[RMDB]
Chemical mapping of a 207-nucleotide RNA with 2A3.
Values cover nucleotides 27 to 156.
Conditions: 150 mM KOAc, 10 mM MgCl2 and 150 mM bicine (pH 8.5), 24 C.
The data come from the RNA Mapping Database (RMDB), library RNAMAK.
RNA sequence: GGGAACGACUCGAGUAGAGUCGAAAAGGGGUCAACAAUGACGAGUAGUCGCUUUGAUCUAUACUGAAGCCUCCACGGUAUAGGGAGCGAUCUACUUAAGACAGUUGACGGAGGCACCCAAAAUACCUUUUGGAGGAUUCGUCCUCCAAAAGGUAAAUCUUCAAGUACACUUCGGUGUACUUGAAGAAAAAGAAACAACAACAACAAC
Reactivity to 2A3 in 0.01 (KOAc 150mM, MgCl2 10mM, bicine 150mM(pH8.5), 24C), signal-to-noise 2, nucleotides 027 to 156: g030g030g180g010u020c020a010a020c020a070a300u300g080a030c010g010a000g000u000a000g000u000c000g000c030u300u170u030g000a010u000c000u000a000u000a000c000u010g060a090a010g000c000c000u000c000c000a010c020g000g010u020a000u000a000g000g000g000a020g000c000g010a040u000c000u000a000c000u020u010a050a020g150a040c020a020g000u000u000g010a010c010g000g000a000g000g010c000a050c000c010c000a040a130a040a020u120a000c010c020u000u000u000u000g010g000a020g000g000a020u020u040c230g070u040c040c000u000c010c010a000a000a000a000g000g000u010a000a000a010